Chemical mapping of a 177-nucleotide RNA with DMS and 2A3.
High 2A3 reactivity points to a flexible backbone, as in loops and unpaired stretches.
The DMS profile rests on 2,455 reads.
It was measured as part of the RMDB library OK1LIB.

[RMDB]
RNA sequence: GGGAACGACUCGAGUAGAGUCGAAAAGUACUACGAACUUGCGUUAUGCUAGAAAAUAGCAUAGCGAGAAUAUGGGAAAACAGGAAACUGAAAGCGAGGUAGUACGAAAAAGAAAAACCAUAUUCAAGGGAUAUUCAAUGUUCGCAUUGAAUAUCCCAAAAGAAACAACAACAACAAC
Reactivity to DMS in 0.01 (KOAc 150mM, MgCl2 10mM, bicine 150mM(pH8.5), 24C), signal-to-noise 2, nucleotides 027 to 126: g000u000a000c000u020a000c000g000a200a210c060u070u010g000c000g030u030u000a000u000g000c000u000a000g000a270a130a120a070u010a000g000c010a000u000a020g020c000g000a020g000a000a000u000a000u040g010g000g000a070a030a110a210c040a100g000g010a120a120a160c010u020g000a010a000a110g050c070g000a200g000g010u000a020g000u000a000c010g030a040a100a100a070a070g030a120a080a000a110a060c020c000a020u000a000u020u000c000a100a300
Reactivity to 2A3 in 0.01 (KOAc 150mM, MgCl2 10mM, bicine 150mM(pH8.5), 24C), signal-to-noise 3, nucleotides 027 to 126: g010u000a000c000u000a010c010g150a220a020c060u110u130g070c000g010u000u000a000u000g000c000u000a000g130a120a220a130a150u020a030g000c000a000u020a000g000c000g020a010g000a000a000u000a010u000g040g000g010a010a110a000a090c030a030g110g030a090a110a090c010u020g040a120a040a010g080c090g060a040g090g040u000a000g000u010a000c000g080a050a050a060a020a030g250a040a040a000a000a000c000c000a000u000a000u000u000c040a080a130